[RMDB]
Source: RMDB library RFM100, as collected in RNAgym. Structure probing data (2A3 and DMS) for a 177-nucleotide construct. Values are in units of 0.01, from 0 to 300, in steps of 10. The reactions ran in a buffer of 150 mM KOAc, 10 mM MgCl2 and 150 mM bicine (pH 8.5), at 24 C. Values cover nucleotides 27 to 126.
RNA sequence: GGGAACGACUCGAGUAGAGUCGAAAAUAUACAAUUAUGAGAGGACUGAUGGAUGAACAAUGAUGAACUAAUCUAUAUUUUAAGUUGAAAUCAAUUACUUCAAACUACAAAAUAUAGGAUUAGUCUGAGCAGGAUAUCAUUUCGAUGAUAUCCUGCUAAAAGAAACAACAACAACAAC
Reactivity to 2A3 in 0.01 (KOAc 150mM, MgCl2 10mM, bicine 150mM(pH8.5), 24C), signal-to-noise 3, nucleotides 027 to 126: u160a000u040a020c070a050a130u130u030a040u130g100a100g020a010g070g040a030c050u060g040a080u080g050g050a020u050g000a010a040c030a150a060u220g050a140u090g010a040a020c000u000a000a000u000c000u000a000u000a000u030u000u000u000a040a030g000u000u000g030a020a010a020u080c090a160a130u250u100a050c050u010u000c010a190a090a050c000u070a040c080a030a000a000a000u000a000u000a010g000g030a000u000u000a020g000u000c040u030g030
Reactivity to DMS in 0.01 (KOAc 150mM, MgCl2 10mM, bicine 150mM(pH8.5), 24C), signal-to-noise 2, nucleotides 027 to 126: u010a140u050a060c160a070a110u070u000a070u010g000a090g000a070g000g000a050c060u000g000a080u010g020g000a050u000g000a040a060c300a070a040u020g000a060u030g000a180a030c000u000a000a000u000c000u000a030u000a020u000u000u000u000a070a090g030u000u000g000a020a010a050u040c130a030a080u020u030a210c150u000u000c030a000a030a010c010u000a170c170a000a000a020a000u010a000u020a000g040g020a010u000u000a030g000u010c080u020g000